[RMDB]
RNA sequence: GGGAACGACUCGAGUAGAGUCGAAAAUGUUGCAAAGACUUGAGUGACGUUCAUAAGGUUCUCGCUCGCUGCAACAGGAGAGUGUGCGAAAAGACAUGAUGAGAACUUUGGCUGUAAUGGAGUCGCCUGAACGUAUAGGCCAGCUACCGAUAAGAACUACCCUUUCCUGUUUCGACAGGAAAGGGUAAAAAGAAACAACAACAACAAC
Reactivity to DMS in 0.01 (KOAc 150mM, MgCl2 10mM, bicine 150mM(pH8.5), 24C), signal-to-noise 1, nucleotides 027 to 156: u010g000u010u000g000c010a020a110a160g010a070c040u030u060g000a170g000u000g000a070c010g030u000u000c090a140u020a100a060g020g000u010u010c040u000c020g000c000u000c030g010c050u000g000c000a100a150c090a180g010g010a030g000a070g070u000g000u000g010c020g000a090a020a100a170g000a130c030a030u020g010a130u000g000a090g000a090a070c060u010u000u000g060g000c030u020g020u010a070a130u020g010g000a230g000u000c150g000c060c010u000g010a040a110c060g000u000a050u000a110g000g000c000c010a120g000c040u000a030c000c050g010a160u000a080a110g000a050a090c110
Reactivity to 2A3 in 0.01 (KOAc 150mM, MgCl2 10mM, bicine 150mM(pH8.5), 24C), signal-to-noise 2, nucleotides 027 to 156: u120g000u000u000g050c010a000a090a030g070a140c040u070u060g010a000g060u030g010a010c060g000u050u000c080a090u060a240a070g050g030u000u020c060u000c000g040c030u010c020g000c010u100g000c060a090a070c020a040g070g000a010g010a030g000u040g030u060g030c000g050a010a050a110a000g060a030c050a060u060g000a040u130g010a070g000a020a000c000u110u030u030g050g000c060u020g050u180a150a040u100g040g000a060g040u060c010g030c060c000u010g040a060a030c040g020u080a070u180a100g030g000c000c030a000g000c040u060a040c130c040g040a010u130a120a040g200a010a010c000
An RNA of 207 nucleotides, treated with DMS and 2A3 and read out base by base. Source: RMDB library OK3TST, as collected in RNAgym. Conditions: 150 mM KOAc, 10 mM MgCl2 and 150 mM bicine (pH 8.5), 24 C.